[RMDB]
RNA sequence: GGGAACGACUCGAGUAGAGUCGAAAAAGAAUAGUUUUCGAACUAUUCUCACGACGACCUUGGGAAACCCUGAGGCGCGAUCCCACGCGAUCGUCUGUUCGUACACCUGGUUGUUCGCAACCAGGAAGAUACUCUUUGUUUUCGAACAAAGAGUAUCAAAAGAAACAACAACAACAAC
Reactivity to DMS in 0.01 (KOAc 150mM, MgCl2 10mM, bicine 150mM(pH8.5), 24C), signal-to-noise 8, nucleotides 027 to 126: a020g000a010a010u000a010g010u000u000u000u010c160g010a030a020c000u000a000u000u000c000u000c130a160c090g010a050c010g010a160c040c000u000u000g010g000g000a140a120a110c250c000c020u000g000a010g010g010c070g010c010g000a090u000c000c000c010a190c100g010c030g000a090u000c040g010u010c050u010g010u000u000c080g010u000a110c260a160c010c000u000g000g010u000u000g010u000u020c190g010c020a010a000c000c000a010g000g000a020a030
Reactivity to 2A3 in 0.01 (KOAc 150mM, MgCl2 10mM, bicine 150mM(pH8.5), 24C), signal-to-noise 8, nucleotides 027 to 126: a000g010a000a000u020a010g010u020u030u070u170c230g030a010a010c000u000a010u020u000c010u020c020a070c040g110a010c000g150a190c000c010u020u010g040g000g000a250a300a200c060c000c000u010g020a010g010g000c010g000c000g020a040u010c000c010c000a010c020g010c030g040a090u060c010g080u020c170u160g160u090u110c080g050u080a040c030a050c090c000u000g000g020u000u010g020u050u060c240g000c090a000a000c000c000a000g000g000a000a000
This 177-nucleotide RNA was probed chemically with DMS and 2A3. The reactions ran in a buffer of 150 mM KOAc, 10 mM MgCl2 and 150 mM bicine (pH 8.5), at 24 C. For DMS, 11,867 sequencing reads were counted. 2A3 adducts were read by reverse transcription with SuperScript II with manganese. The 2A3 profile rests on 16,386 reads.